[RMDB]
RNA sequence: GGGAACGACUCGAGUAGAGUCGAAAAAAAAAGAUAUGGAUGCCGAGAUCGAAGAACUAAGCUCCCCACCUACAGUCGGAAACGACUGUAGAGGCUUAGGGAGAUCGAGGCAUCCUAAGUCAAAAAAGAAUUAUAUCUGGUUCGCCAGAUAUAAUUCAAAAGAAACAACAACAACAAC
Reactivity to DMS in 0.01 (KOAc 150mM, MgCl2 10mM, bicine 150mM(pH8.5), 24C), signal-to-noise 2, nucleotides 027 to 126: a120a070a050a170a020g020a000u000a030u000g000g000a020u000g000c010c010g000a300g010a020u000c010g000a120a110g000a170a220c000u020a010a010g010c050u010c110c000c010c020a300c120c010u000a010c000a010g000u000c000g040g020a020a000a010c000g010a010c010u020g010u010a000g000a010g000g010c010u000u000a020g000g010g020a030g000a000u000c000g010a300g000g000c010a010u000c000c000u000a000a050g000u010c000a000a050a070a140a060a110